Source information: The record gives the reactivity of an RNA of 177 nucleotides to 2A3. Reactivities are given for positions 27 through 126.

RNA sequence: GGGAACGACUCGAGUAGAGUCGAAAAACUAAAUUUAGAGAAGACUCUGAUUGUAUUGCAUCUGCUCUCACAGAGUACGCUUUCACAGUGGUCGGGCAUCCUAUCAGAUUGACCAAGGGAUCUGAUCGCCCCGUUCUAGCUUCGGCUAGAACGGGGCAAAAGAAACAACAACAACAAC
Reactivity to 2A3 in 0.01 (KOAc 150mM, MgCl2 10mM, bicine 150mM(pH8.5), 24C), signal-to-noise 1, nucleotides 027 to 126: a010c000u030a000a000a300u280u180u190a030g000a000g080a050a040g000a000c000u000c000u000g010a250u260u210g040u210a070u030u130g120c000a050u030c090u050g000c000u000c000u000c000a050c090a030g000a010g000u000a120c050g000c000u020u070u220c170a090c010a030g000u010g270g040u130c000g000g010g000c090a030u030c000c010u040a000u030c000a000g000a040u040u060g150a050c000c120a120a050g200g000g020a000u000c000u000g000a000u040c080